[RMDB]
RNA sequence: GGGAACGACUCGAGUAGAGUCGAAAAGAUAUGGAAGGGCAAGGGAGACUUUCGGAAACGAAAAGGUCAUCGAUCUUGCCUUCCUAAGUCAAACCUAAGCAGACAACUUCGGUUGUCUGCUUAGGAAGAGGUGUUCAUAGUUCGCUAUGAACACCUCAAAAGAAACAACAACAACAAC
Reactivity to DMS in 0.01 (KOAc 150mM, MgCl2 10mM, bicine 150mM(pH8.5), 24C), signal-to-noise 1, nucleotides 027 to 126: g030a080u000a300u000g000g000a010a030g020g000g030c000a010a010g000g000g000a170g000a000c000u030u000u000c010g040g000a100a090a130c020g010a000a010a000a080g040g010u000c070a190u010c130g000a120u030c000u010u010g010c000c000u000u030c010c000u000a040a100g010u000c050a080a190a190c000c000u030a050a000g000c000a010g000a010c000a000a010c000u010u010c220g020g030u000u000g000u000c000u000g000c000u000u000a000g000g000a030a080
Reactivity to 2A3 in 0.01 (KOAc 150mM, MgCl2 10mM, bicine 150mM(pH8.5), 24C), signal-to-noise 2, nucleotides 027 to 126: g020a020u070a020u130g030g050a000a050g210g120g040c000a010a000g040g000g020a040g010a020c030u020u040u020c000g030g090a050a120a070c020g070a010a000a050a110g170g050u080c000a150u300c080g090a080u030c010u010u000g000c020c020u010u000c000c010u040a030a030g000u030c040a090a030a110c010c010u000a000a000g010c000a010g010a030c000a020a030c000u120u170c300g090g000u000u010g000u010c000u000g010c000u000u000a000g000g000a000a020
The record gives the reactivity of an RNA of 177 nucleotides to DMS and 2A3. High 2A3 reactivity points to a flexible backbone, as in loops and unpaired stretches. The RNA was probed in 150 mM KOAc, 10 mM MgCl2 and 150 mM bicine (pH 8.5) at 24 C. Reactivities are rounded to 0.1 and cut off at 0 and 3. The data come from the RNA Mapping Database (RMDB), library TTRDEL. For DMS the reverse transcriptase was MarathonRT.